[RMDB]
RNA sequence: GGGAACGACUCGAGUAGAGUCGAAAACAUGCCUAAGACUUGUUUCGGACCCAUAGUCCGAAAGAUCUUUGUUGAUGGCGUGCCAUUUGUAGUAUCUUGUGGUUAUCACUACAAAGAAUUAGGUUUAUCAAGUAACCGUGUUCGCACGGUUACUUGAAAAAGAAACAACAACAACAAC
Reactivity to DMS in 0.01 (KOAc 150mM, MgCl2 10mM, bicine 150mM(pH8.5), 24C), signal-to-noise 1, nucleotides 027 to 126: c040a030u010g000c000c000u010a120a170g000a080c100u000u010g000u000u000u000c000g000g010a010c000c130c300a110u000a190g030u000c000c020g010a000a030a060g000a140u000c110u010u010u000g000u000u000g000a200u000g020g010c060g010u000g000c000c020a160u000u000u000g020u000a080g000u020a030u000c060u000u000g040u020g000g010u000u010a050u010c070a040c030u000a010c010a000a020a020g000a030a090u000u010a060g000g010u000u000u000a150
Reactivity to 2A3 in 0.01 (KOAc 150mM, MgCl2 10mM, bicine 150mM(pH8.5), 24C), signal-to-noise 1, nucleotides 027 to 126: c020a010u040g030c000c000u000a020a010g010a010c000u190u220g060u140u030u000c020g000g020a000c000c040c110a180u140a000g000u010c000c020g000a010a000a000g020a020u080c040u130u100u100g000u020u030g090a150u100g000g010c030g010u020g050c000c000a040u050u060u110g020u000a020g030u040a000u120c060u030u140g080u070g100g050u050u040a060u140c040a020c050u020a020c000a020a010a040g070a050a020u130u100a070g000g100u100u080u080a130

The data come from the RNA Mapping Database (RMDB), library 15KREP. An RNA of 177 nucleotides, treated with DMS and 2A3 and read out base by base. The RNA was probed in 150 mM KOAc, 10 mM MgCl2 and 150 mM bicine (pH 8.5) at 24 C. High 2A3 reactivity points to a flexible backbone, as in loops and unpaired stretches. The DMS profile rests on 859 reads. Values cover nucleotides 27 to 126. For DMS the reverse transcriptase was MarathonRT. 2A3 adducts were read by reverse transcription with SuperScript II with manganese.